The data come from the RNA Mapping Database (RMDB), library OK1LIB.
Chemical mapping of a 177-nucleotide RNA with 2A3.
Reactivities are given for positions 27 through 126.
The RNA was probed in 150 mM KOAc, 10 mM MgCl2 and 150 mM bicine (pH 8.5) at 24 C.
The 2A3 profile rests on 554 reads.
RNA sequence: GGGAACGACUCGAGUAGAGUCGAAAAGUAAGCCUCAGAACAAGAUGAGCCAACACCUCAGAAACCUCAGUCAGCUUUUUAUUACUGCAGAUUGCUUCUUAGUAUAUUGGGAAUGAAUUCCUGGGACCCCGUCAUGGAGUUUCGACUCCAUGACGGGAAAAGAAACAACAACAACAAC
Reactivity to 2A3 in 0.01 (KOAc 150mM, MgCl2 10mM, bicine 150mM(pH8.5), 24C), signal-to-noise 2, nucleotides 027 to 126: g040u040a100a000g000c000c030u080c160a030g070a160a010c070a020a040g020a070u090g010a010g070c000c000a000a000c000a060c000c000u000c020a000g010a000a120a000c020c010u030c000a010g000u010c000a000g060c010u000u160u070u110u100a160u130u140a020c090u000g000c000a100g090a300u110u120g000c000u000u000c000u020u000a020g060u000a060u090a070u030u190g070g020g000a060a050u000g070a040a070u080u070c000c000u000g070g000g020a090c000